The record gives the reactivity of an RNA of 177 nucleotides to 2A3 and DMS.
The 2A3 profile rests on 3,635 reads.
As a SHAPE reagent, 2A3 marks flexible, mostly unpaired nucleotides at the ribose 2'-OH.

RNA sequence: GGGAACGACUCGAGUAGAGUCGAAAAGAAAAUCCCAAGCAUAGCAUAGCAUAGCAUUGCAUAGCAUAGCAUAGCAUAGCAUAGCAUAGCAUAGCAUAGCAUAGCAUAGCAUAGCAUACAAAAAAAAGUUAUUGCUUGAAUUCGUUCAAGCAAUAACAAAAGAAACAACAACAACAAC
Reactivity to 2A3 in 0.01 (KOAc 150mM, MgCl2 10mM, bicine 150mM(pH8.5), 24C), signal-to-noise 2, nucleotides 027 to 126: g070a000a070a000a010u010c000c000c020a000a020g070c010a040u120a030g000c010a020u040a040g000c020a050u080a040g000c020a030u020u060g010c010a020u100a050g000c000a020u050a000g010c020a060u060a000g000c000a050u060a000g010c030a040u060a030g000c010a020u060a030g000c020a010u050a040g000c010a000u050a020g010c010a020u080a010g000c010a030u060a020g000c010a030u060a050g000c030a020u120a120c120a050a090a020a030a000a000a000a000
Reactivity to DMS in 0.01 (KOAc 150mM, MgCl2 10mM, bicine 150mM(pH8.5), 24C), signal-to-noise 2, nucleotides 027 to 126: g000a090a080a080a160u000c000c000c010a120a120g020c080a050u000a090g030c020a080u000a070g000c040a060u010a060g020c050a100u010u000g020c050a070u020a070g000c020a040u000a100g020c030a050u020a050g000c030a050u000a070g020c020a040u000a060g020c030a030u010a030g010c040a040u000a110g010c030a040u010a100g000c040a030u000a030g030c070a070u000a040g000c030a040u000a040g000c010a030u010a030c120a020a000a000a020a070a040a080a120